Notes:
This 207-nucleotide RNA was probed chemically with 2A3 and DMS. For 2A3 the reverse transcriptase was SuperScript II with manganese. Reactivities are given for positions 27 through 156. The RNA was probed in 150 mM KOAc, 10 mM MgCl2 and 150 mM bicine (pH 8.5) at 24 C.

[RMDB]
RNA sequence: GGGAACGACUCGAGUAGAGUCGAAAAUAUGUAGCAAAGAUCUAGAUCAUUUGUUUGAAGCAGUAAAAAGAGAAAUGUGAAUCCCCUCUUCUUACCUCCUAUAACAUGCUAAUUAACAUCACUGCAAUUAACCACCAUUCACAGCUCUUCAGCUGCAAUCAUCCUAUCCAUUCGUGGAUAGGAUGAUAAAAGAAACAACAACAACAAC
Reactivity to 2A3 in 0.01 (KOAc 150mM, MgCl2 10mM, bicine 150mM(pH8.5), 24C), signal-to-noise 3, nucleotides 027 to 156: u200a030u070g060u040a020g030c060a070a050a090g020a070u010c050u110a050g040a100u040c080a170u070u030u080g090u030u030u170g060a070a020g000c010a000g000u090a050a050a020a030a000g010a000g040a030a140a160u030g000u020g020a030a060u100c000c020c000c000u010c020u060u000c000u020u050a060c010c010u030c030c030u110a120u000a130a010c030a010u050g020c000u060a090a110u200u030a070a060c010a010u100c010a010c050u030g000c020a010a020u000u030a050a020c020c010a020c010c010a000u000u000c000a010c000a070g100c050u010c020u010u020c010a020g000c000u010g000c010a000
Reactivity to DMS in 0.01 (KOAc 150mM, MgCl2 10mM, bicine 150mM(pH8.5), 24C), signal-to-noise 2, nucleotides 027 to 156: u010a070u000g010u000a090g040c040a090a110a130g000a110u000c030u010a100g010a100u010c020a120u000u000u010g000u000u000u020g000a120a140g010c010a020g030u000a020a060a070a040a050g000a050g000a060a040a100u000g020u000g000a070a040u000c010c030c040c030u000c020u000u000c070u010u000a050c060c050u020c050c010u010a120u010a050a080c080a050u010g000c060u000a050a130u000u000a050a060c030a080u000c040a090c050u010g020c060a040a090u000u000a040a060c060c020a030c010c030a210u000u000c020a010c010a030g010c010u000c030u010u000c020a300g040c010u000g000c010a180